[RMDB]
RNA sequence: GGGAACGACUCGAGUAGAGUCGAAAAGGAGUCUUCGGACUCCAAAAAGAUAUGGACUGGAACUACCGACGCUGAAUUUCGAAGAACUAGCAUCGGAAACGAUGCUAGGGAGAAGCGCGUCGGCCAGUCCUAAGUCAAAAAGGUGGUUCGCCACCAAGGUAGUUACAGGGUUCGCCCUGUAACUACCAAAAGAAACAACAACAACAAC
Reactivity to 2A3 in 0.01 (KOAc 150mM, MgCl2 10mM, bicine 150mM(pH8.5), 24C), signal-to-noise 2, nucleotides 027 to 156: g000g000a010g000u000c000u060u120c250g100g020a020c030u010c010c030a010a000a010a000a000g030a000u010a010u020g000g000a010c010u050g020g030a120a040c070u110a110c300c000g010a010c000g000c070u160g100a300a300u200u070u040c100g120a230a000g000a020a040c000u000a000g020c000a000u000c020g060g000a060a000a020c000g020a000u000g000c000u000a000g000g010g000a020g000a000a030g070c040g000c020g030u000c000g010g000c000c000a000g000u000c000c000u000a000a000g020u000c020a000a000a170a000a120g030g000u050g060g000u040u080c170g090c140c000a000c010c000a000a040
Conditions: 150 mM KOAc, 10 mM MgCl2 and 150 mM bicine (pH 8.5), 24 C. An RNA of 207 nucleotides, treated with 2A3 and read out base by base. For 2A3, 1,015 sequencing reads were counted. It was measured as part of the RMDB library RNAMAK. 2A3 adducts were read by reverse transcription with SuperScript II with manganese. Values cover nucleotides 27 to 156.